RNA sequence: GGGAACGACUCGAGUAGAGUCGAAAAACCCUGCCUACUCGACCCCUUCCCCACGGGGACUCCACUCUGGGAACGCGAUGACACGCGUGAGCGCUCGGCGACCAACGGACGACAAUUGUCGAGGCGGACCUACUAGAGGGUUCGCCCUCUAGUAGGUAAAAGAAACAACAACAACAAC
Reactivity to DMS in 0.01 (KOAc 150mM, MgCl2 10mM, bicine 150mM(pH8.5), 24C), signal-to-noise 5, nucleotides 027 to 126: a110c010c010c010u000g010c030c010u000a080c040u000c010g010a120c040c030c030c030u010u000c030c000c000c040a120c160g010g000g010g000a070c060u000c010c030a070c060u000c030u000g010g000g000a110a060c030g010c010g000a100u010g010a150c150a130c010g010c010g010u000g010a130g010c030g010c040u000c020g000g000c030g000a090c050c050a080a090c070g000g000a090c040g000a060c060a100a130u000u010g010u000c000g010a050g010g000c060g000g010
Reactivity to 2A3 in 0.01 (KOAc 150mM, MgCl2 10mM, bicine 150mM(pH8.5), 24C), signal-to-noise 3, nucleotides 027 to 126: a020c010c000c000u000g030c010c000u040a060c020u030c030g050a060c020c000c010c010u030u030c010c000c000c000a020c030g020g010g020g030a020c010u000c020c020a040c020u090c060u030g030g000g040a060a030c010g010c010g040a050u110g060a040c030a030c170g020c000g040u050g040a010g030c030g010c020u010c030g050g000c020g030a050c000c010a050a040c040g060g060a020c010g010a010c070a110a190u130u090g020u020c020g000a020g030g020c020g020g020